Background: The record gives the reactivity of an RNA of 177 nucleotides to DMS and 2A3. The RNA was probed in 150 mM KOAc, 10 mM MgCl2 and 150 mM bicine (pH 8.5) at 24 C. For DMS the reverse transcriptase was MarathonRT. It was measured as part of the RMDB library TTRDEL. Reactivities are rounded to 0.1 and cut off at 0 and 3.

RNA sequence: GGGAACGACUCGAGUAGAGUCGAAAAGAUAUGGAGAUCUGGUAGGGAGCUCGUCGGAAACGAUCGAGCGAGGAUCUACCUGGAUCUCCUAAGUCAAAACCCUGAACUGGUUCGCCAGUUCAGGGAAGUUUGUGAAGAAGUUCGCUUCUUCACAAACAAAAGAAACAACAACAACAAC
Reactivity to DMS in 0.01 (KOAc 150mM, MgCl2 10mM, bicine 150mM(pH8.5), 24C), signal-to-noise 2, nucleotides 027 to 126: g010a040u000a300u000g000g000a020g010a010u010c010u000g000g000u000a000g000g000g020a040g020c000u000c000g000u010c010g000g000a180a090a170c010g010a020u020c050g010a020g020c000g010a010g000g010a010u010c000u000a010c000c000u020g020g000a010u000c000u000c000c000u010a010a050g010u000c030a130a060a120a120c000c000c000u010g000a020a010c000u000g000g000u000u010c230g010c000c000a020g010u000u000c000a000g000g000g010a010a010
Reactivity to 2A3 in 0.01 (KOAc 150mM, MgCl2 10mM, bicine 150mM(pH8.5), 24C), signal-to-noise 2, nucleotides 027 to 126: g010a020u070a020u140g010g000a010g000a010u000c000u020g000g010u000a000g030g000g010a000g010c000u010c010g000u000c000g010g050a110a090a060c020g010a070u300c170g000a000g000c000g020a050g000g010a010u020c000u010a010c010c040u030g020g000a000u010c010u000c000c000u010a020a000g010u000c000a010a040a090a210c010c000c000u000g000a000a000c010u000g000g050u070u070c150g050c080c000a000g000u000u000c000a000g000g000g000a000a000